[RMDB]
RNA sequence: GGGAACGACUCGAGUAGAGUCGAAAACAUUGGCCUUUUGAAAUGCAUGGUCAUUAUUUCACACUAUGGGUGAGCAACUGUUAUUGUGGAUAUCUAAAGGUUCUCCCUGGAAGCAAUAUAACCUUUAACGGAACGAAAAAGAAUGACACUGACUCAAAUUACCUAACACAUUCGUGUGUUAGGUAAUAAAAGAAACAACAACAACAAC
Reactivity to 2A3 in 0.01 (KOAc 150mM, MgCl2 10mM, bicine 150mM(pH8.5), 24C), signal-to-noise 6, nucleotides 027 to 156: c030a050u050u110g050g010c020c000u100u100u070u180g170a130a110a050u150g050c060a060u110g040g010u050c020a010u040u080a070u030u120u060c050a040c010a020c070u070a090u160g090g030g000u030g020a040g020c020a030a100c040u060g050u180u070a060u050u070g030u080g070g040a030u010a060u110c050u090a060a050a040g030g000u060u050c040u030c040c000c000u010g050g060a030a000g010c020a030a020u040a010u050a170a070c000c000u060u070u050a080a040c070g030g010a050a020c040g080a120a050a010a010a000g080a020a040u050g010a020c020a020c150u110g090a050c010u040c100a060a110
Reactivity to DMS in 0.01 (KOAc 150mM, MgCl2 10mM, bicine 150mM(pH8.5), 24C), signal-to-noise 3, nucleotides 027 to 156: c040a130u000u010g020g020c020c030u020u010u010u000g020a120a100a090u030g020c090a100u010g020g050u000c010a060u000u000a090u000u010u000c060a100c060a110c090u010a050u000g010g020g030u000g000a080g020c090a070a090c100u010g010u010u000a070u000u000g040u010g010g010a150u000a060u000c040u000a020a060a050g030g000u000u010c050u000c020c010c010u000g070g000a080a120g040c030a050a100u000a090u000a060a070c060c020u000u000u000a070a160c060g020g010a080a140c040g040a050a040a040a120a050g010a060a070u010g020a080c050a060c040u010g020a170c020u000c020a050a130